[RMDB]
RNA sequence: GGGAACGACUCGAGUAGAGUCGAAAACUUGGACAAGAGGACGGUGGCGAGAACGUAGCGCCCCUGGCUGGUUACGCUUUCGGUCUUCCCAUGUCGAGAGUUUAUGCCCGGCACUUUGGUGGAGAUCGCGAUCACUCACCUUCGGGUGAGUGAUCGCAAAAGAAACAACAACAACAAC
Reactivity to 2A3 in 0.01 (KOAc 150mM, MgCl2 10mM, bicine 150mM(pH8.5), 24C), signal-to-noise 1, nucleotides 027 to 126: c000u000u090g050g000a000c000a090a080g000a030g040g000a020c020g000g000u000g000g070c000g010a140g000a140a000c030g040u130a030g020c000g050c010c000c000c000u020g000g000c000u030g030g050u050u010a000c000g000c000u120u070u000c020g130g010u000c000u030u030c020c000c050a020u020g010u020c060g060a060g000a020g300u100u080u000a060u170g030c000c000c000g060g000c080a220c080u070u080u070g100g100u180g000g020a070g000a110u090c000
The record gives the reactivity of an RNA of 177 nucleotides to 2A3. The data come from the RNA Mapping Database (RMDB), library OK1LIB. For 2A3 the reverse transcriptase was SuperScript II with manganese. The 2A3 profile rests on 451 reads. The RNA was probed in 150 mM KOAc, 10 mM MgCl2 and 150 mM bicine (pH 8.5) at 24 C. Values cover nucleotides 27 to 126.